This 207-nucleotide RNA was probed chemically with 2A3. The reactions ran in a buffer of 150 mM KOAc, 10 mM MgCl2 and 150 mM bicine (pH 8.5), at 24 C. The data come from the RNA Mapping Database (RMDB), library M2RFPK.
[RMDB]
RNA sequence: GGGAACGACUCGAGUAGAGUCGAAAAACGUCGCCGGCGUAUGUACGCAUACGCGGGCGACGAAGGCCUUCUGGUGAUGUUUCUGGCCACCCAGGAGGUCUUGAGGAAGAGGUGGACGGCCAGACAAAAAAGUCUUCUAACUUCGGUUAGAAGACAAGACGUUUGUUAGGUUCGCCUAACAAACGUCAAAAGAAACAACAACAACAAC
Reactivity to 2A3 in 0.01 (KOAc 150mM, MgCl2 10mM, bicine 150mM(pH8.5), 24C), signal-to-noise 2, nucleotides 027 to 156: a010c010g000u010c000g000c010c050g190g000c010g040u000a000u040g060u050a070c180g010c110a000u020a010c000g000c190g020g010g010c000g000a000c000g000a000a000g000g000c010c000u000u000c000u000g020g060u140g080a190u050g090u080u140u060c000u000g000g050c000c000a000c020c000c000a000g000g000a000g000g000u000c020u040u090g040a020g010g060a060a080g010a040g080g020u110g050g050a070c030g050g020c000c000a000g000a000c100a010a130a020a010a000a000g000u020c010u010u020c000u000a000a000c000u030u090c160g040g000u000u010a000g000a000a000g000a000c000a000a020